Structure probing data (2A3) for a 207-nucleotide construct.
The 2A3 profile rests on 845 reads.
The RNA was probed in 150 mM KOAc, 10 mM MgCl2 and 150 mM bicine (pH 8.5) at 24 C.
Reactivities are given for positions 27 through 156.
The data come from the RNA Mapping Database (RMDB), library OK3TST.
RNA sequence: GGGAACGACUCGAGUAGAGUCGAAAAGAUUAAGUGGGAGCGUCGCCCUUUCGGUGCAUCGGAUAUUAAUUAGCCAGUGCGUGGCAUUACGCAUAUUGAUGUCUACUUUGGCGUAGACUCUGCCAAUUUAAGGAUUGCUGGGCAAUCCAGCCCUAGACGUCGUCGAUAUAUUCGUAUAUCGACGACGAAAAGAAACAACAACAACAAC
Reactivity to 2A3 in 0.01 (KOAc 150mM, MgCl2 10mM, bicine 150mM(pH8.5), 24C), signal-to-noise 2, nucleotides 027 to 156: g030a020u120u120a020a050g020u050g000g070g000a010g000c020g030u010c020g000c010c000c000u010u000u000c080g020g000u070g000c000a060u070c000g110g000a010u040a020u170u080a190a050u100u140a070g030c010c070a030g010u000g030c010g000u010g010g070c150a080u130u290a000c000g000c000a000u030a040u040u110g030a010u040g000u010c010u030a020c000u090u050u010g030g000c090g000u000a080g030a040c010u000c010u000g070c010c000a050a070u000u010u160a070a000g030g010a040u030u100g040c060u150g010g080g000c000a010a020u000c000c000a000g020c000c000c000u040a060g020a150